[RMDB]
RNA sequence: GGGAACGACUCGAGUAGAGUCGAAAAGCGAUGGGCGGCACCCUGGGGGCUAAUACCGACGUCAAGAUCCCGGUGGUGAGUGUCACCAAGUCGGUCGGAUUCCAGCUACGCGGACAGUCUGGGCCAAACAAGAUCCCGUAUUCGUACGGGAUCUUGUAAAAGAAACAACAACAACAAC
Reactivity to DMS in 0.01 (KOAc 150mM, MgCl2 10mM, bicine 150mM(pH8.5), 24C), signal-to-noise 2, nucleotides 027 to 126: g030c100g000a100u020g020g040g010c020g000g020c050a040c050c080c020u000g020g060g000g030g070c040u030a060a090u060a060c010c010g000a020c070g000u020c150a090a040g020a090u010c030c000c030g030g020u030g000g000u000g010a130g000u050g000u020c000a020c030c010a070a070g010u000c000g000g050u050c110g000g020a100u010u010c000c000a070g000c050u000a070c190g020c070g020g000a090c060a060g020u010c030u000g000g010g000c010c000a100a090
Reactivity to 2A3 in 0.01 (KOAc 150mM, MgCl2 10mM, bicine 150mM(pH8.5), 24C), signal-to-noise 2, nucleotides 027 to 126: g080c060g050a100u090g030g000g010c030g020g040c030a060c010c010c070u040g020g010g000g010g030c020u020a080a000u090a170c000c010g020a010c000g040u090c050a050a050g030a150u100c000c020c000g010g030u080g020g030u060g080a180g060u110g040u070c010a030c010c000a070a000g060u070c030g030g000u030c060g040g000a050u130u010c010c000a000g020c020u030a040c060g000c040g030g040a030c020a020g030u020c050u000g000g000g020c000c000a000a120